[RMDB]
RNA sequence: GGGAACGACUCGAGUAGAGUCGAAAAUCUGCUCUUGGCGGUGGCCAUGCUCAGCCUGCCAUCUCGGGGAGAUUCAUCCCGAAAUCUCACGGAAUUCAUGGGACAUCGACAGAAGCGCUGGCUGAUCGUCCCUGGUAGUCUUCGGACUACCAGGGACAAAAGAAACAACAACAACAAC
Reactivity to 2A3 in 0.01 (KOAc 150mM, MgCl2 10mM, bicine 150mM(pH8.5), 24C), signal-to-noise 2, nucleotides 027 to 126: u040c030u080g100c010u010c000u030u130g060g000c030g030g030u070g020g000c050c010a070u080g030c040u030c080a050g000c010c020u020g050c000c000a130u030c140u090c080g060g000g070g000a080g040a030u130u030c020a040u020c070c000c000g060a030a010a070u090c060u010c000a050c060g050g040a030a140u210u120c060a100u130g000g030g130a070c000a060u040c020g000a000c050a040g080a090a020g010c010g040c050u000g030g000c000u040g030a060u020c070
Chemical mapping of a 177-nucleotide RNA with 2A3.
The RNA was probed in 150 mM KOAc, 10 mM MgCl2 and 150 mM bicine (pH 8.5) at 24 C.
Values cover nucleotides 27 to 126.